[RMDB]
RNA sequence: GGGAACGACUCGAGUAGAGUCGAAAAGGGACUGAUCUUGAAGUACCCCGCCAUGAGCGCGUAGGUCAGCGCGUUCUCCCCGGCCGCGCUCUCGCGGACGUGCUGCACGACGGGCUGUCGGAUCGACCACUCCGCGUCAUUUCGAUGACGCGGAGUGAAAAGAAACAACAACAACAAC
Reactivity to DMS in 0.01 (KOAc 150mM, MgCl2 10mM, bicine 150mM(pH8.5), 24C), signal-to-noise 2, nucleotides 027 to 126: g010g000g000a070c060u010g000a040u000c100u010u000g000a150a050g030u030a020c100c010c000c050g000c060c170a090u000g030a090g000c000g020c020g020u010a110g000g000u010c110a040g000c010g030c010g030u020u010c050u020c000c010c000c020g000g010c090c010g000c040g000c100u030c130u030c200g040c060g000g000a050c090g030u020g040c030u000g010c070a040c060g020a040c050g000g000g000c080u000g000u000c100g000g000a130u060c010g030a200c240
Reactivity to 2A3 in 0.01 (KOAc 150mM, MgCl2 10mM, bicine 150mM(pH8.5), 24C), signal-to-noise 3, nucleotides 027 to 126: g050g000g020a020c040u070g030a180u120c050u100u200g100a070a000g020u180a190c000c000c000c000g030c040c020a130u240g030a020g010c050g010c030g020u060a030g040g090u090c000a030g020c030g000c000g020u050u010c050u050c080c000c010c010g040g010c020c020g010c020g000c040u040c020u100c020g070c020g020g010a000c020g030u050g020c020u080g030c030a070c050g040a000c000g010g000g060c020u030g040u020c020g020g020a060u130c000g040a030c000
Chemical mapping of a 177-nucleotide RNA with DMS and 2A3.
Conditions: 150 mM KOAc, 10 mM MgCl2 and 150 mM bicine (pH 8.5), 24 C.
Source: RMDB library OK1LIB, as collected in RNAgym.
For 2A3 the reverse transcriptase was SuperScript II with manganese.
The DMS profile rests on 1,994 reads.